[RMDB]
RNA sequence: GGGAACGACUCGAGUAGAGUCGAAAAUUGGUAGUGCCUGCCUCAUAUUAGCCAGGGACAAAGCAACGCCUUGUUUAUCCCAGCUUGGCUUUUGGUCUGUGCCUGUGCCUAGUUCAUGCCCUGGACAAGCCGUACUUUCCUUCGGGAAAGUACGGCUAAAAGAAACAACAACAACAAC
Reactivity to 2A3 in 0.01 (KOAc 150mM, MgCl2 10mM, bicine 150mM(pH8.5), 24C), signal-to-noise 1, nucleotides 027 to 126: u180u000g150g000u170a090g010u010g070c000c000u000g000c000c060u090c110a110u100a030u150u180a020g000c000c030a000g030g000g000a000c050a010a100a000g030c070a010a010c020g000c000c040u090u000g070u050u070u060a090u000c000c000c000a000g030c000u030u020g010g050c000u230u200u000u050g040g040u030c010u200g070u070g030c020c110u100g040u070g010c000c000u000a020g030u000u040c010a000u150g010c000c000c000u000g010g060a000c000a010
An RNA of 177 nucleotides, treated with 2A3 and read out base by base. 2A3 adducts were read by reverse transcription with SuperScript II with manganese. 2A3 is a SHAPE reagent: it acylates the 2'-hydroxyl of flexible nucleotides of all four kinds.